[RMDB]
The record gives the reactivity of an RNA of 207 nucleotides to DMS and 2A3. Reactivities are rounded to 0.1 and cut off at 0 and 3. For DMS the reverse transcriptase was MarathonRT. The RNA was probed in 150 mM KOAc, 10 mM MgCl2 and 150 mM bicine (pH 8.5) at 24 C.
RNA sequence: GGGAACGACUCGAGUAGAGUCGAAAACAGAGCUAAUGAGCCACAUACCUACCUAAGGUGAAAGCUCCUUCUCUCGCAAUGUGUAACUCAUGAUUCUCAUGACCCCUGGUUGGAGAGAUCCGGACUAUAGACUAGAGGGUGUUCGCACCCUCUAGAAGAUGUAAACUCGGUUCGCCGAGUUUACAUCAAAAGAAACAACAACAACAAC
Reactivity to DMS in 0.01 (KOAc 150mM, MgCl2 10mM, bicine 150mM(pH8.5), 24C), signal-to-noise 1, nucleotides 027 to 156: c050a140g030a070g020c040u030a120a110u000g000a060g000c000c000a060c100a110u010a050c050c040u000a120c040c100u000a140a030g030g030u010g000a160a100a100g050c040u000c040c030u000u000c020u000c000u000c010g060c000a120a060u010g020u020g000u000a060a060c010u000c000a050u010g000a180u010u000c080u000c020a130u000g030a180c010c010c010c050u000g040g020u000u000g000g000a070g000a180g000a040u000c030c010g020g020a070c080u000a160u010a130g040a220c020u010a010g010a060g010g010g000u000g040u000u000c300g080c000a040c020c000c000u000c000u010a000g000a000a070
Reactivity to 2A3 in 0.01 (KOAc 150mM, MgCl2 10mM, bicine 150mM(pH8.5), 24C), signal-to-noise 2, nucleotides 027 to 156: c040a020g030a000g040c080u080a080a000u100g050a010g010c020c000a020c020a020u140a040c000c010u040a060c030c080u160a180a100g050g000u060g050a150a090a020g010c020u030c030c060u130u030c020u030c030u000c040g060c040a030a040u000g060u010g000u150a040a020c050u040c010a010u060g030a130u220u070c120u040c090a080u050g040a040c000c000c000c000u060g050g050u060u050g010g010a000g000a030g000a060u020c030c010g000g010a000c040u040a040u110a290g050a080c000u000a000g000a000g000g010g010u020g000u020u020c090g000c060a000c000c000c000u000c020u000a000g000a000a000